[RMDB]
An RNA of 207 nucleotides, treated with 2A3 and read out base by base.
RNA sequence: GGGAACGACUCGAGUAGAGUCGAAAACAAGACUGACAUGGCCAUCAAUGUCUACACUGGCGGGUGCCAUUUGCUCUGCCACGACGACGUGAUCGGCAGCCGACGUGUGAGCUACAUUCUCUACCUGACGGAUCCGGAUGUGGCGUGGCAGCCGAGCCCCAACUUGUCUCUUCGGAGACAAGUUGGGAAAAGAAACAACAACAACAAC
Reactivity to 2A3 in 0.01 (KOAc 150mM, MgCl2 10mM, bicine 150mM(pH8.5), 24C), signal-to-noise 1, nucleotides 027 to 156: c090a040a060g060a020c040u110g000a000c000a150u150g020g120c100c020a060u060c020a150a130u170g040u060c030u110a090c050a040c100u050g000g000c020g000g000g100u130g080c080c010a090u050u020u150g000c000u000c110u160g000c000c000a080c000g060a060c030g020a040c000g020u100g040a070u000c000g030g080c020a040g000c020c020g060a100c040g080u080g110u050g080a080g040c040u020a050c060a110u170u030c000u000c050u040a110c080c030u010g180a040c060g060g030a040u100c030c030g000g020a020u030g000u010g080g000c000g010u020g000g000c020a030g030c000c010g010a020g040c000

2A3 adducts were read by reverse transcription with SuperScript II with manganese. Reactivities are rounded to 0.1 and cut off at 0 and 3.